[RMDB]
The record gives the reactivity of an RNA of 177 nucleotides to 2A3 and DMS. The DMS profile rests on 1,846 reads. Conditions: 150 mM KOAc, 10 mM MgCl2 and 150 mM bicine (pH 8.5), 24 C. Reactivities are given for positions 27 through 126. The data come from the RNA Mapping Database (RMDB), library RFM100.
RNA sequence: GGGAACGACUCGAGUAGAGUCGAAAAGCGUUGCGUUCGAAUAUGGGACAAGAAUUAAGCCAACAUGAACUUUAUGUAGAACAGUUAAAAAAGGCUCUAAAGACACGGGGAGUAAAGGUUAAGGGUAAACCGUUAUAGGCUUCGGCCUAUAACGGUUAAAAGAAACAACAACAACAAC
Reactivity to 2A3 in 0.01 (KOAc 150mM, MgCl2 10mM, bicine 150mM(pH8.5), 24C), signal-to-noise 1, nucleotides 027 to 126: g080c020g040u110u070g000c010g040u010u070c000g000a010a000u130a210u300g080g080g000a110c000a110a110g060a090a110u080u080a000a000g090c000c000a000a000c080a170u190g000a030a000c010u000u140u190a010u150g170u090a070g000a060a040c000a250g110u130u230a000a060a000a170a000a000g040g000c000u000c080u160a090a140a040g060a000c090a010c000g090g000g000g110a040g000u030a040a040a030g070g000u050u050a000a000g000g000g110u040a010
Reactivity to DMS in 0.01 (KOAc 150mM, MgCl2 10mM, bicine 150mM(pH8.5), 24C), signal-to-noise 2, nucleotides 027 to 126: g020c090g030u000u000g000c010g010u000u000c040g000a090a140u080a030u000g000g000g010a110c060a020a130g000a030a090u000u000a050a040g000c000c010a070a160c080a050u040g010a050a080c110u020u000u050a090u030g020u000a060g000a010a150c160a000g000u030u000a020a040a060a100a090a030g000g010c020u000c090u000a040a090a050g000a100c160a050c090g020g000g000g010a110g000u030a020a050a040g010g020u000u000a040a060g030g000g000u000a040